Structure probing data (DMS and 2A3) for a 177-nucleotide construct.

[RMDB]
RNA sequence: GGGAACGACUCGAGUAGAGUCGAAAAGUCUCACGAGUGCACAGACAAAGGUAGUUGACUCCGGCGCUACCAGUACUCGAAAGAAUGCGAAAGAGUUCAAGUAUUCCAACCGGAGAAGAACUCAAAACAUUACGUGGAGCUUCGGCUCCACGUAAUGAAAAGAAACAACAACAACAAC
Reactivity to DMS in 0.01 (KOAc 150mM, MgCl2 10mM, bicine 150mM(pH8.5), 24C), signal-to-noise 2, nucleotides 027 to 126: g010u000c000u000c000a270c080g000a000g000u000g000c010a210c300a080g000a140c300a030a170a070g030g000u000a070g030u010u060g000a080c030u000c030c020g020g000c120g000c000u000a000c000c000a060g030u000a000c000u000c030g000a020a220a150g000a000a070u120g000c120g000a020a080a150g030a010g000u000u000c020a120a130g000u070a060u000u070c100c290a090a090c000c020g000g000a000g000a270a070g000a030a000c000u000c000a130a020a100a110
Reactivity to 2A3 in 0.01 (KOAc 150mM, MgCl2 10mM, bicine 150mM(pH8.5), 24C), signal-to-noise 2, nucleotides 027 to 126: g070u000c000u000c080a020c050g000a000g010u030g030c000a060c050a300g090a160c090a220a060a020g020g010u000a090g030u030u130g020a020c000u010c020c010g000g000c000g000c000u000a000c000c000a000g000u000a000c000u030c000g020a030a030a000g110a020a040u130g100c230g020a030a170a000g000a020g080u000u010c040a100a090g110u030a300u300u120c080c090a030a070c010c010g000g000a000g000a050a000g040a000a000c010u000c070a000a150a000a000

Record summary
The reactions ran in a buffer of 150 mM KOAc, 10 mM MgCl2 and 150 mM bicine (pH 8.5), at 24 C. DMS adducts were read by reverse transcription with MarathonRT. The DMS profile rests on 1,513 reads.